[RMDB]
RNA sequence: GGGAACGACUCGAGUAGAGUCGAAAAGGAACCUUAUUCCAGUUUAGGGAUGACAAGCUGUUAUUUACUCUACACAUUACUCAGUGGAUUAAUGUACAGGAUCAACGCUUUAAAGGAUUAUUGAAGAAAUAACGUAACAAUUCGUUGUUACGUUAUUAAAAGAAACAACAACAACAAC
Reactivity to DMS in 0.01 (KOAc 150mM, MgCl2 10mM, bicine 150mM(pH8.5), 24C), signal-to-noise 9, nucleotides 027 to 126: g010g010a120a130c040c020u000u000a070u000u000c010c010a130g010u000u000u000a070g010g010g020a090u000g010a060c130a070a110g010c020u000g010u000u000a070u000u000u000a050c070u000c020u000a040c040a090c150a070u010u010a070c170u010c150a140g010u000g010g000a030u000u000a020a020u000g010u000a030c060a020g000g000a090u000c050a030a070c070g010c020u000u000u000a040a060a090g000g000a070u000u000a090u000u010g000a100a110g000a080
Reactivity to 2A3 in 0.01 (KOAc 150mM, MgCl2 10mM, bicine 150mM(pH8.5), 24C), signal-to-noise 9, nucleotides 027 to 126: g030g010a040a050c010c000u010u040a080u070u000c010c010a020g020u030u070u090a050g000g010g030a040u040g020a020c030a060a030g050c020u020g030u050u010a060u020u050u030a030c010u010c010u030a020c040a010c010a080u060u210a120c040u070c100a040g030u030g060g020a020u010u040a030a020u040g020u030a010c010a030g050g020a030u030c020a030a050c050g030c110u060u050u130a050a060a020g030g000a030u060u070a090u100u170g090a080a050g050a050